Structure probing data (2A3 and DMS) for a 207-nucleotide construct. The data come from the RNA Mapping Database (RMDB), library M2RFPK. For DMS, 3,942 sequencing reads were counted. Reactivities are rounded to 0.1 and cut off at 0 and 3. 2A3 adducts were read by reverse transcription with SuperScript II with manganese. For 2A3, 5,431 sequencing reads were counted.
RNA sequence: GGGAACGACUCGAGUAGAGUCGAAAAACGGUCGUACGCGACCGAGGCGCGGCUAGGUCGACGGACCGAACAAUGGCAUCCCGCAUUCUGCCAUCCGCCGCGCAGCUUCUUCUCAAACGGUGCGGGAAAAAGUAGGACACCUUCGGGUGUCCUACAACAUUCCUACCUUGUUCGCAAGGUAGGAAUGAAAAGAAACAACAACAACAAC
Reactivity to 2A3 in 0.01 (KOAc 150mM, MgCl2 10mM, bicine 150mM(pH8.5), 24C), signal-to-noise 4, nucleotides 027 to 156: a000c010g000g000u000c010g020u050a050c280g010c030g130a000c000c000g000a040g000g000c000g000c000g010g000c000u020a010g010g000u010c020g100a200c220g180g020a010c010c010g000a000a000c020a010a000u000g000g000c000a040u080c000c010c000g010c000a030u220u070c040u090g000c000c000a010u010c030c030g000c000c000g000c000g000c000a000g000c010u110u070c010u070u000c020u010c020a080a080a040c110g020g010u000g000c000g000g020g000a030a030a020a000a000g010u000a000g000g000a000c000a000c010c030u040u130c290g040g010g000u000g000u000c010c000u000a000c000a000a000
Reactivity to DMS in 0.01 (KOAc 150mM, MgCl2 10mM, bicine 150mM(pH8.5), 24C), signal-to-noise 2, nucleotides 027 to 156: a080c010g020g020u010c000g040u030a140c260g000c000g030a010c000c010g010a020g000g010c010g000c030g000g090c020u000a080g020g040u000c000g010a160c300g020g000a030c000c020g010a150a040c300a150a080u000g020g020c000a300u000c020c000c020g020c020a070u020u000c100u000g000c000c010a030u000c020c040g020c000c010g000c010g000c000a030g000c030u000u000c050u000u000c050u010c040a120a090a060c080g030g010u010g020c030g000g000g040a000a060a040a170a170g030u010a020g010g020a030c000a010c000c000u010u000c290g080g010g030u000g020u000c050c000u000a000c010a030a080